[RMDB]
RNA sequence: GGGAACGACUCGAGUAGAGUCGAAAAAUACACCAGCAGUAGGACUCAGCGACCGUCACAACAAGGUUGUGCUGGUAUCCGACGGUCGUAUAGCCCUGUCUUGCAGGUUGCCUUGCACUGACGUGCUACACCAUUUACAGAUUCGUCUGUAAAUGAAACUAGCCCUCCUGUUCGCAGGAGGGCUAGUAAAAGAAACAACAACAACAAC
Reactivity to 2A3 in 0.01 (KOAc 150mM, MgCl2 10mM, bicine 150mM(pH8.5), 24C), signal-to-noise 1, nucleotides 027 to 156: a010u180a040c100a030c010c000a000g020c000a000g010u110a000g010g000a020c010u010c030a000g000c000g000a010c010c010g000u000c020a040c050a270a040c050a100a160g010g010u000u000g040u080g090c020u000g060g000u010a050u000c020c070g000a000c010g000g000u000c000g000u040a020u040a080g040c000c000c000u050g040u050c070u080u110g030c040a010g040g030u130u220g130c100c110u070u010g030c050a060c050u220g100a100c110g050u010g000c020u030a080c030a030c060c000a000u000u000u000a020c000a000g000a000u000u110c150g160u020c030u000g020u020a000a000a000u000g000a130a000